[RMDB]
RNA sequence: GGGAACGACUCGAGUAGAGUCGAAAAUUAAAGCGCGAAAAAGAUCGAUCGAUCGUUUGAACGCGCAAGUCGAAGUUUGAUACGGGCAAACUAGCUAGCUAGCUAGCAAAACAAACUUCGUAAAAAACGAAUUAGGAGUGUUCGCACUCCUAAUUCGAAAAGAAACAACAACAACAAC
Reactivity to 2A3 in 0.01 (KOAc 150mM, MgCl2 10mM, bicine 150mM(pH8.5), 24C), signal-to-noise 1, nucleotides 027 to 126: u060u050a080a070a020g010c000g000c010g050a060a040a000a020a050g030a010u010c010g080a180u130c140g000a040u010c080g050u000u030u090g060a130a000c010g030c000g080c020a010a000g050u000c020g000a010a000g000u020u010u000g080a080u070a130c060g030g050g040c090a130a000a000c010u000a000g000c020u000a000g140c060u090a020g000c000u040a000g000c020a140a080a000a000c000a000a000a000c000u000u000c020g000u110a050a120a000a000a000a020
Reactivity to DMS in 0.01 (KOAc 150mM, MgCl2 10mM, bicine 150mM(pH8.5), 24C), signal-to-noise 2, nucleotides 027 to 126: u010u020a100a090a100g010c010g010c020g020a070a060a070a010a020g010a010u010c000g030a150u010c220g000a000u000c000g010u000u000u000g020a130a140c020g010c000g030c010a050a070g040u010c010g010a000a010g000u000u000u000g010a070u010a110c210g010g010g000c100a050a110a180c000u000a010g000c030u010a120g010c120u000a020g010c020u000a120g000c070a040a080a050a100c010a000a000a000c000u000u000c000g020u030a010a030a050a050a060a070

The record gives the reactivity of an RNA of 177 nucleotides to 2A3 and DMS. For DMS the reverse transcriptase was MarathonRT. Values are in units of 0.01, from 0 to 300, in steps of 10. Reactivities are given for positions 27 through 126. The reactions ran in a buffer of 150 mM KOAc, 10 mM MgCl2 and 150 mM bicine (pH 8.5), at 24 C. Source: RMDB library M2PK90, as collected in RNAgym.